An RNA of 177 nucleotides, treated with 2A3 and DMS and read out base by base.
The reactions ran in a buffer of 150 mM KOAc, 10 mM MgCl2 and 150 mM bicine (pH 8.5), at 24 C.
The DMS profile rests on 1,667 reads.
The 2A3 profile rests on 775 reads.

RNA sequence: GGGAACGACUCGAGUAGAGUCGAAAAGAAAGAAGAGAAGCAGAGAAAGCAUCUCAGGAGCGUACAGCCUGUGCAAUUGCACAGGGCACUGAGAAAGGCUCCACACUUGGUUUAAUGCUCUGCUGAAGUGAUACGAGGGGUUCGCCCCUCGUAUCACAAAAGAAACAACAACAACAAC
Reactivity to 2A3 in 0.01 (KOAc 150mM, MgCl2 10mM, bicine 150mM(pH8.5), 24C), signal-to-noise 2, nucleotides 027 to 126: g000a010a100a010g110a120a020g060a000g020a050a010g050c000a000g020a000g020a030a060a010g020c000a050u030c050u000c040a020g000g000a050g030c080g040u170a030c100a070g040c030c000u000g000u000g000c030a110a300u300u300g020c000a000c000a000g000g000g000c000a000c010u040g000a000g150a080a010a000g150g000c000u030c010c000a030c000a000c110u180u270g040g000u090u080u240a100a070u260g000c000u000c000u030g000c010u000g000a000a000
Reactivity to DMS in 0.01 (KOAc 150mM, MgCl2 10mM, bicine 150mM(pH8.5), 24C), signal-to-noise 2, nucleotides 027 to 126: g030a130a090a160g070a090a070g000a130g000a060a050g000c020a000g010a070g000a040a020a150g000c020a090u000c000u000c060a030g000g000a100g070c000g050u000a080c300a220g000c000c020u030g020u000g040c000a300a050u040u020g010c000a020c000a010g020g000g000c010a000c000u000g000a040g000a100a020a160g000g070c000u000c040c000a070c230a040c120u110u060g000g020u000u000u000a080a090u010g000c000u000c060u000g000c000u000g000a110a210